Annotation:
This 207-nucleotide RNA was probed chemically with 2A3 and DMS. For 2A3 the reverse transcriptase was SuperScript II with manganese. For 2A3, 600 sequencing reads were counted. For DMS, 1,982 sequencing reads were counted.
RNA sequence: GGGAACGACUCGAGUAGAGUCGAAAAUUUUUAGUAGAGAUGGGGUUUCGCCAUGUUAUCUAGGCUGGUCUCGAACUCCUGAGCUCAAGCGGUCCACCUGCCUUGGCCUCCCAAGUACUGGGAUUACCGGCAGGAGCUGCCGCACCUGGCCAGAACAAUUAAAUCCACUAUUCGUAGUGGAUUUAAUAAAAGAAACAACAACAACAAC
Reactivity to 2A3 in 0.01 (KOAc 150mM, MgCl2 10mM, bicine 150mM(pH8.5), 24C), signal-to-noise 1, nucleotides 027 to 156: u250u260u100u130u220a160g020u180a100g000a030g100a100u230g010g030g030g000u010u080u060c080g000c000c040a030u080g040u080u100a120u020c060u040a100g050g020c100u110g000g000u150c020u020c110g010a050a040c040u020c020c000u080g020a020g000c000u020c070a000a050g000c020g050g000u180c110c020a050c010c000u020g020c000c010u090u190g020g000c070c010u000c010c000c000a030a060g040u040a070c250u080g000g000g000a030u080u150a110c060c040g000g020c030a010g000g020a000g000c040u080g000c000c000g000c000a060c000c040u000g030g040c000c010a000g010a060a010c010a020
Reactivity to DMS in 0.01 (KOAc 150mM, MgCl2 10mM, bicine 150mM(pH8.5), 24C), signal-to-noise 1, nucleotides 027 to 156: u030u020u020u020u000a220g020u000a120g000a130g000a100u020g050g010g020g040u010u000u000c060g020c030c020a130u010g010u000u010a080u000c060u010a100g000g020c020u020g030g010u020c030u010c040g000a040a040c030u020c050c020u000g000a070g070c030u000c060a120a050g010c020g050g030u010c160c090a120c060c020u010g030c050c010u010u010g070g020c070c260u000c020c000c020a030a280g010u000a120c170u010g020g020g030a090u000u000a060c020c050g020g050c000a030g000g000a070g000c060u000g030c020c010g000c030a050c090c030u000g000g070c030c010a110g020a060a100c130a100